Source information
Chemical mapping of a 177-nucleotide RNA with 2A3 and DMS. It was measured as part of the RMDB library M2PK50.
[RMDB]
RNA sequence: GGGAACGACUCGAGUAGAGUCGAAAACAUCGCGUAUUCGUACGCGAUGGUAGGGCUGUUUUUCUCGCUGACUUUCUGCCCCAAACAAAAAAGUCAGCAAAAUACGCGUAUCCUUCGGGAUACGCAAUACUAAUUCUAAUUUCGAUUAGAAUUAGUAAAAAGAAACAACAACAACAAC
Reactivity to 2A3 in 0.01 (KOAc 150mM, MgCl2 10mM, bicine 150mM(pH8.5), 24C), signal-to-noise 4, nucleotides 027 to 126: c000a000u000c010g000c000g010u010a020u020u090c240g040u050a010c000g000c000g000a000u000g000g020u060a080g000g010g010c010u010g010u000u010u000u010u010c080u040c100g020c000u000g010a010c000u020u000u010c010u010g000c010c010c020c070a020a030a030c040a020a020a000a000a000a000g000u000c000a000g000c000a010a000a000a000u040a010c040g010c000g000u000a000u000c010c010u020u080c190g060g000g000a000u000a000c000g000c000a000a000
Reactivity to DMS in 0.01 (KOAc 150mM, MgCl2 10mM, bicine 150mM(pH8.5), 24C), signal-to-noise 6, nucleotides 027 to 126: c000a000u000c000g010c000g020u000a010u010u020c220g020u000a000c000g010c000g010a000u000g000g010u010a090g010g000g010c000u010g010u000u000u000u000u000c060u010c190g010c000u010g000a010c000u000u000u000c000u000g000c000c000c010c180a020a020a140c140a000a010a010a010a010a020g010u000c000a000g010c000a010a010a050a060u020a050c190g010c000g000u000a000u000c000c000u000u020c200g020g010g000a010u000a000c000g020c000a010a020

Notes: For DMS the reverse transcriptase was MarathonRT.